RNA sequence: GGGAACGACUCGAGUAGAGUCGAAAAGUAACAAUCUUCGGAUUGUUACAUAGCCUCCAGGUGCAAACCAAAACCUUAGAAAGAAAAGAGAAAGAAAAAGAAGUGACUACCUGUUCGCAGGUAGUAAUUAGAUAGGGCGAUUCGUCGCCCUAUCUAAAAAAGAAACAACAACAACAAC
Reactivity to DMS in 0.01 (KOAc 150mM, MgCl2 10mM, bicine 150mM(pH8.5), 24C), signal-to-noise 1, nucleotides 027 to 126: g020u000a010a000c000a000a000u000c000u000u010c210g010g000a010u010u000g020u000u000a000c000a080u020a090g000c050c000u000c090c080a070g000g050u000g000c020a120a130a090c090c020a080a080a110a090c040c030u000u000a090g000a160a050a110g000a020a020a050a070g010a050g030a050a060a080g020a060a050a050a060a140g020a090a040g000u000g010a020c000u000a000c000c000u000g000u000u000c240g020c020a030g010g020u000a010g020u010a000a020